[RMDB]
RNA sequence: GGGAACGACUCGAGUAGAGUCGAAAAGAGCAAAAUCUUCGGAUUUUGCUCAAUGGGUAACCACUAAAAUCCCGAAAGGGUGGGCUGUGGUGACCUUCCGGCAUCCCCGCACGUUCGCGUGCGGGGACUAUCCACCCAGAUUCGUCUGGGUGGAUAGAAAAGAAACAACAACAACAAC
Reactivity to DMS in 0.01 (KOAc 150mM, MgCl2 10mM, bicine 150mM(pH8.5), 24C), signal-to-noise 1, nucleotides 027 to 126: g010a020g020c010a010a010a010a000u000c000u000u030c230g030g010a010u000u000u010u000g020c000u000c010a000a060u000g000g020g010u000a110a020c000c000a020c000u010a010a010a020a050u010c000c010c000g000a090a130a110g020g010g000u010g000g010g040c300u000g020u000g010g020u000g000a040c010c000u000u000c010c010g000g060c100a090u010c010c000c000c000g000c010a000c000g010u000u000c200g010c000g050u000g030c000g010g000g000g000a010